[RMDB]
Structure probing data (2A3 and DMS) for a 177-nucleotide construct. Conditions: 150 mM KOAc, 10 mM MgCl2 and 150 mM bicine (pH 8.5), 24 C. DMS adducts were read by reverse transcription with MarathonRT. The data come from the RNA Mapping Database (RMDB), library M2PK90. Values are in units of 0.01, from 0 to 300, in steps of 10. For 2A3 the reverse transcriptase was SuperScript II with manganese. Values cover nucleotides 27 to 126. As a SHAPE reagent, 2A3 marks flexible, mostly unpaired nucleotides at the ribose 2'-OH.
RNA sequence: GGGAACGACUCGAGUAGAGUCGAAAAAUAAACCGGAAGCGACGCAGCAAGCCCGUCCGGAAGGGCAACCGGAAUGCGUAUCUCAACUCGCCCGAGACGCACCUGAGAGACGGGAAUGCGUAAAAAACAUGCAGAUUAACUUCGGUUAAUCUGCAUGAAAAGAAACAACAACAACAAC
Reactivity to 2A3 in 0.01 (KOAc 150mM, MgCl2 10mM, bicine 150mM(pH8.5), 24C), signal-to-noise 1, nucleotides 027 to 126: a000u090a010a070a020c030c000g020g010a110a010g090c060g090a010c010g020c030a050g020c020a070a120g040c020c000c010g020u010c020c010g090g030a040a010g030g010g010c020a000a020c000c010g020g000a060a130u150g030c000g010u010a090u030c170u050c070a030a110c030u020c030g030c010c000c000g010a040g030a010c090g000c030a290c030c000u080g010a110g010a000g020a080c000g000g010g000a030a040u020g000c030g000u010a050a030a000a100a000a020
Reactivity to DMS in 0.01 (KOAc 150mM, MgCl2 10mM, bicine 150mM(pH8.5), 24C), signal-to-noise 2, nucleotides 027 to 126: a080u020a040a070a190c090c010g010g010a150a140g030c110g000a030c020g040c030a080g020c100a180a120g030c000c010c020g000u000c000c040g000g010a180a020g000g000g010c050a110a160c020c000g000g030a140a090u010g000c000g000u000a110u000c070u000c180a080a130c120u000c070g000c000c030c020g000a030g000a090c160g000c010a060c010c020u000g000a300g000a060g000a030c070g040g000g010a050a030u000g020c000g000u010a000a030a050a090a020a090